[RMDB]
RNA sequence: GGGAACGACUCGAGUAGAGUCGAAAAUACUUAUGUUAUGCACAACUAUGGUAUUGUUGUCUUCUGUGUAUCACUUGUAUGUCUUCAAUCAGGUCUUAUCAAGUGAUGUUAUGUUUGAAGAUGCCCAAAACCUCGUGGUUCGCCACGAGGAAAAGAAACAACAACAACAAC
Reactivity to 2A3 in 0.01 (KOAc 150mM, MgCl2 10mM, bicine 150mM(pH8.5), 24C), signal-to-noise 6, nucleotides 027 to 129: u010a000c010u100u080a070u160g020u000u020a140u300g140c100a100c030a110a030c010u030a040u110g010g010u020a010u020u090g120u060u240g010u010c010u010u010c020u040g040u010g010u020a000u000c000a000c000u020u000g020u020a060u080g050u020c020u080u070c150a160a300u080c040a060g060g100u000c010u050u190a160u200c010a020a020g000u010g030a000u010g010u020u090a050u060g150u010u090u050g000a000a000g000a000u060g000c000c000c010a020a060a030a060
Reactivity to DMS in 0.01 (KOAc 150mM, MgCl2 10mM, bicine 150mM(pH8.5), 24C), signal-to-noise 5, nucleotides 027 to 129: u030a030c050u030u030a070u050g040u000u000a070u080g050c300a070c170a070a050c000u050a170u030g020g060u010a020u000u000g060u030u040g030u040c040u000u030c020u000g040u020g040u050a010u010c010a010c010u010u020g000u000a070u020g030u040c000u010u060c180a100a130u100c210a090g020g010u060c040u020u080a120u030c020a010a010g040u030g020a020u010g000u050u040a070u040g000u040u040u010g070a040a040g010a000u000g050c030c000c020a040a000a070a150